[RMDB]
RNA sequence: GGGAACGACUCGAGUAGAGUCGAAAAAGAAGAUCCUCAGCUGUACAGUGAGGAUGCUACCUCAAGAGCAGCAGUCGGAUUGAUUGGUGAUAUAGCAGCGAUGUUUCCAGACGGCUCAAUCAAACAAGGCAUAAAUGCGAUUCGUCGCAUUUAUGCCAAAAGAAACAACAACAACAAC
Reactivity to 2A3 in 0.01 (KOAc 150mM, MgCl2 10mM, bicine 150mM(pH8.5), 24C), signal-to-noise 1, nucleotides 027 to 126: a020g150a050a000g020a000u000c000c000u020c030a070g070c050u050g020u190a070c000a200g080u040g010a030g020g020a020u080g000c010u080a130c020c040u000c040a100a020g050a010g020c000a000g000c010a010g050u050c110g040g010a040u090u040g020a010u040u010g180g040u020g070a060u150a020u030a190g180c050a010g000c000g040a030u050g280u070u070u040c000c000a040g010a010c000g030g040c000u060c000a030a030u040c010a120a000a060c030a080a040
Reactivity to DMS in 0.01 (KOAc 150mM, MgCl2 10mM, bicine 150mM(pH8.5), 24C), signal-to-noise 1, nucleotides 027 to 126: a130g030a080a040g000a110u010c010c000u000c120a000g020c010u000g030u000a160c220a060g000u000g000a020g020g020a060u000g000c090u020a130c020c000u000c060a070a240g010a180g010c050a010g000c070a060g000u000c130g010g000a120u000u000g000a080u040u000g030g000u000g010a040u020a020u000a040g000c030a030g000c110g010a100u000g000u010u000u000c020c020a080g000a090c050g020g000c060u000c070a130a080u000c130a060a000a110c240a020a020